[RMDB]
RNA sequence: GGGAACGACUCGAGUAGAGUCGAAAAUAUUAGUAGGACCAACACCUGUAAAUAUAAUUGGAAGAAAUAUUUUGACACAAUUGGGUUGUACUCUAGUGUUCCCAAUUAGUUCAAUUGAAACUGUCCCGGUACGUGGAACGUUCGCGUUCCACGUACCAAAAGAAACAACAACAACAAC
Reactivity to 2A3 in 0.01 (KOAc 150mM, MgCl2 10mM, bicine 150mM(pH8.5), 24C), signal-to-noise 1, nucleotides 027 to 126: u180a000u040u010a000g260u010a040g000g070a170c020c020a210a090c120a060c050c000u050g130u200a000a070a000u080a140u070a030a160u000u070g000g070a000a190g050a130a140a000u170a160u030u060u120u120g040a010c010a000c000a040a000u070u010g000g000g130u000u100g110u060a060c000u020c040u060a000g130u000g000u100u000c000c000c000a000a000u110u040a030g000u000u000c000a000a010u000u230g130a030a000a000c030u040g260u200c000c050c000

This 177-nucleotide RNA was probed chemically with 2A3. It was measured as part of the RMDB library RFM100. For 2A3, 519 sequencing reads were counted. Reactivities are given for positions 27 through 126. For 2A3 the reverse transcriptase was SuperScript II with manganese.